[RMDB]
RNA sequence: GGGAACGACUCGAGUAGAGUCGAAAAGAUAAAGGCAGCGUAGACGCAGGCCUGGUGUUGCAGCACAUGGGUACGGCGGCGGUCUUCGGUGGCGGCCUCGGCCUGGUGUUCCGCUCUCCUGCGGUUCUAUUAAUCGAUUAUUCGUAAUCGAUUAAUAAAAAGAAACAACAACAACAAC
Reactivity to 2A3 in 0.01 (KOAc 150mM, MgCl2 10mM, bicine 150mM(pH8.5), 24C), signal-to-noise 6, nucleotides 027 to 126: g050a020u160a080a130a010g050g000c010a020g000c040g070u110a050g030a110c030g000c040a020g040g010c010c040u030g000g030u060g010u060u160g050c050a020g020c010a020c040a190u120g030g000g030u280a160c020g020g020c060g020g000c030g060g000u000c010u090u090c080g220g150u100g020g030c030g050g000c010c000u010c010g010g000c000c010u030g000g030u030g010u050u000c020c010g000c010u000c010u030c010c010u010g000c000g000g030u050u000c010
Reactivity to DMS in 0.01 (KOAc 150mM, MgCl2 10mM, bicine 150mM(pH8.5), 24C), signal-to-noise 9, nucleotides 027 to 126: g010a130u010a060a090a080g010g010c080a050g020c040g020u000a080g010a120c050g010c030a050g010g010c190c050u000g010g020u000g010u000u000g020c100a070g000c030a030c040a070u000g010g000g020u000a070c050g010g000c150g010g010c020g020g020u000c010u000u010c230g010g010u010g010g010c030g010g010c030c010u000c040g010g010c020c010u000g010g010u000g010u000u000c030c020g000c030u000c210u000c050c040u000g010c040g000g010u010u000c060

Chemical mapping of a 177-nucleotide RNA with 2A3 and DMS.
For 2A3, 13,782 sequencing reads were counted.
High 2A3 reactivity points to a flexible backbone, as in loops and unpaired stretches.
The reactions ran in a buffer of 150 mM KOAc, 10 mM MgCl2 and 150 mM bicine (pH 8.5), at 24 C.